[RMDB]
RNA sequence: GGGAACGACUCGAGUAGAGUCGAAAAGAGAGGGUAACCACCGGCGCGCGUCACUGAUAUAUCCACCGGGGGGUAAGGGGAGAAAAGGAUACAGCGCGACGAAGUCAGCACGCUGCCCCGUAAGGCUUGAAGAGUGUAGUGUUCGCACUACACUCAACUAUUAUACAUUGUUCGCAAUGUAUAAUAGAAAAGAAACAACAACAACAAC
Reactivity to DMS in 0.01 (KOAc 150mM, MgCl2 10mM, bicine 150mM(pH8.5), 24C), signal-to-noise 2, nucleotides 027 to 156: g000a110g010a080g010g000g020u010a110a080c070c010a080c000c010g000g000c040g000c040g030c020g000u000c030a220c080u000g000a180u000a100u000a090u000c020c000a130c050c050g050g000g030g020g040g040u000a030a080g000g010g000g040a130g010a060a090a080a100g000g000a130u000a060c060a020g000c000g040c000g010a150c010g000a100a100g010u010c050a120g010c030a040c040g030c000u000g010c030c020c000c010g000u010a090a060g020g020c040u000u000g010a160a160g000a040g030u020g030u020a030g020u010g010u000u000c280g050c000a070c000u020a010c000a030c000u000c010a030a080
Reactivity to 2A3 in 0.01 (KOAc 150mM, MgCl2 10mM, bicine 150mM(pH8.5), 24C), signal-to-noise 3, nucleotides 027 to 156: g090a010g030a020g020g030g030u040a040a060c040c050a040c020c050g050g000c020g000c010g020c010g070u070c020a030c090u060g070a030u070a020u040a030u210c050c020a060c060c060g000g010g010g030g000g000u030a080a060g010g090g000g010a050g040a000a130a020a030g010g000a030u070a090c050a020g000c030g010c010g040a010c020g010a030a030g060u080c010a010g020c040a030c030g030c010u040g010c040c000c000c000g030u040a050a030g040g010c070u130u110g090a140a070g000a030g000u010g000u010a000g000u010g020u020u040c180g010c070a000c010u000a010c000a010c000u000c000a000a000